[RMDB]
RNA sequence: GGGAACGACUCGAGUAGAGUCGAAAAUUAUGCCUGUUAGCUCUGGAACCAUGUCAGAGAUGAUGCAAGAAACUUGGAACCUCUGUCAACAGCAGAUAACAGAAGGAACAUCAGUCCAAAUGCUUUAUGCAUUUCAAUACUGUAGAUGGCUAAGCCAAUACUAUGGGACGUUCGCGUCCCAUAGUAUAAAAGAAACAACAACAACAAC
Reactivity to DMS in 0.01 (KOAc 150mM, MgCl2 10mM, bicine 150mM(pH8.5), 24C), signal-to-noise 2, nucleotides 027 to 156: u000u000a090u000g010c050c020u000g020u010u010a060g000c010u000c010u000g030g010a110a290c070c120a090u010g010u020c030a050g020a150g040a070u010g020a170u020g020c060a090a270g020a120a100a060c070u000u000g030g020a110a240c010c000u000c000u000g000u000c010a030a090c020a090g030c010a090g010a110u000a040a090c010a040g000a050a100g000g010a050a110c050a100u000c070a050g000u000c110c050a000a030a020u010g040c000u000u020u010a130u010g020c000a040u010u000u000c040a020a110u020a080c040u000g000u000a090g010a100u000g020g010c040u000a070a130g010c000c000a060
Reactivity to 2A3 in 0.01 (KOAc 150mM, MgCl2 10mM, bicine 150mM(pH8.5), 24C), signal-to-noise 3, nucleotides 027 to 156: u170u130a050u150g050c010c000u010g000u050u040a030g010c050u000c000u050g040g030a130a160c070c020a100u100g030u060c000a000g000a010g040a090u130g010a030u080g030c020a000a110g040a190a230a050c080u060u050g080g030a130a110c000c010u000c000u010g030u020c030a020a010c000a110g050c020a000g000a000u010a050a000c000a000g070a110a120g140g020a040a000c000a090u110c010a000g020u000c020c050a040a000a000u030g000c000u160u170u080a050u270g000c000a000u010u000u050c100a100a120u100a140c060u070g000u050a030g020a130u060g040g000c040u060a060a010g030c000c000a020

Structure probing data (DMS and 2A3) for a 207-nucleotide construct. The reactions ran in a buffer of 150 mM KOAc, 10 mM MgCl2 and 150 mM bicine (pH 8.5), at 24 C. For 2A3, 1,387 sequencing reads were counted. DMS adducts were read by reverse transcription with MarathonRT. Reactivities are given for positions 27 through 156.